[RMDB]
RNA sequence: GGGAACGACUCGAGUAGAGUCGAAAACACAUGGCGGUGCUUAAUUUAUUCUACCACCCCGGAUUGGUCUUUAGACUUCUCAGCGAAGAAUCAACACCAAGCGCUAGUGAGAUGCAACGUCUAGAUCUCAUAGCGCAGAUGUGUAAUCAGGUUAGCAGCCUCCUACAGAUUUCGAUCUGUAGGAGGCAAAAGAAACAACAACAACAAC
Reactivity to 2A3 in 0.01 (KOAc 150mM, MgCl2 10mM, bicine 150mM(pH8.5), 24C), signal-to-noise 1, nucleotides 027 to 156: c030a010c000a000u120g020g020c100g050g040u000g010c050u080u060a140a140u160u300u300a180u180u000c050u050a140c020c030a000c000c000c000c040g000g090a050u030u030g000g000u030c030u110u130u130a010g010a030c040u060u000c010u010c030a080g010c010g040a100a010g040a000a220u150c050a010a010c030a000c090c000a000a010g060c000g030c010u030a010g300u030g150a000g000a000u010g080c040a120a080c040g070u060c040u110a080g000a070u000c030u000c000a000u000a000g000c000g000c000a000g000a030u000g000u000g080u010a180a060u080c130a010g100g000u050u170a030g110c000a000
This 207-nucleotide RNA was probed chemically with 2A3. Values cover nucleotides 27 to 156. For 2A3 the reverse transcriptase was SuperScript II with manganese. The reactions ran in a buffer of 150 mM KOAc, 10 mM MgCl2 and 150 mM bicine (pH 8.5), at 24 C.